The record gives the reactivity of an RNA of 177 nucleotides to DMS. For DMS the reverse transcriptase was MarathonRT. The RNA was probed in 150 mM KOAc, 10 mM MgCl2 and 150 mM bicine (pH 8.5) at 24 C.
RNA sequence: GGGAACGACUCGAGUAGAGUCGAAAAGAUAUGGAUGCUAGGGAACGUGCGGUAGGUUGCGCUCGGAAACGAGCGACCCAACCUACCGUCACGGUGCCCCGCGAGGGGAGCCCUAGCAUCCUAAGUCCAUCAUAACGGUCUUCGGACCGUUAUGAUGAAAAGAAACAACAACAACAAC
Reactivity to DMS in 0.01 (KOAc 150mM, MgCl2 10mM, bicine 150mM(pH8.5), 24C), signal-to-noise 2, nucleotides 027 to 126: g000a120u000a300u010g010g000a010u000g010c000u010a000g000g040g000a080a110c000g000u010g000c020g020g010u000a010g020g000u010u000g000c050g030c000u000c000g000g010a150a170a230c000g000a010g030c000g040a190c210c300c010a000a020c010c000u000a000c000c000g000u000c000a000c000g000g030u000g010c010c010c000c010g000c300g000a250g010g000g020g000a100g000c040c000c010u000a000g000c000a000u000c000c000u000a020a110g000u040c100